This 177-nucleotide RNA was probed chemically with 2A3 and DMS. The 2A3 profile rests on 657 reads. For DMS the reverse transcriptase was MarathonRT. It was measured as part of the RMDB library OK2TST. For DMS, 954 sequencing reads were counted. The reactions ran in a buffer of 150 mM KOAc, 10 mM MgCl2 and 150 mM bicine (pH 8.5), at 24 C.

[RMDB]
RNA sequence: GGGAACGACUCGAGUAGAGUCGAAAAAGAAUUUUCAACGAAUAUUAUGCCACCGAAAUUCCGAAAAGAUUUUCAUGAUCUACUUGAAAAAAUGAGUGUUCAAGUUGGUUCAUACAUUCAAGGACAAAUGUGCACAGUAAUUCGUUACUGUGCACAUAAAAGAAACAACAACAACAAC
Reactivity to 2A3 in 0.01 (KOAc 150mM, MgCl2 10mM, bicine 150mM(pH8.5), 24C), signal-to-noise 1, nucleotides 027 to 126: a060g070a030a020u130u080u050u000c050a080a040c000g020a050a030u020a070u140u040a050u070g030c000c000a040c060c030g070a050a050a070u070u040c040c050g050a010a000a000a100g060a010u000u020u060u160c030a030u210g010a010u000c000u050a010c020u020u030g060a030a020a000a060a060a080u300g020a100g150u230g060u060u000c000a010a000g010u000u060g020g000u040u050c030a020u020a030c000a000u080u040c060a040a060g020g020a060c010a010a210
Reactivity to DMS in 0.01 (KOAc 150mM, MgCl2 10mM, bicine 150mM(pH8.5), 24C), signal-to-noise 2, nucleotides 027 to 126: a060g010a120a050u000u000u010u000c020a060a240c080g040a080a040u040a040u000u020a040u000g010c030c020a050c060c060g000a080a060a090u000u000c020c020g000a060a070a130a050g000a090u000u000u000u000c070a120u010g000a020u010c010u000a040c010u000u010g000a000a070a040a030a040a050u020g000a090g020u010g000u010u010c030a020a050g010u010u010g020g000u000u010c010a060u010a110c240a070u000u000c090a090a110g020g000a060c140a040a110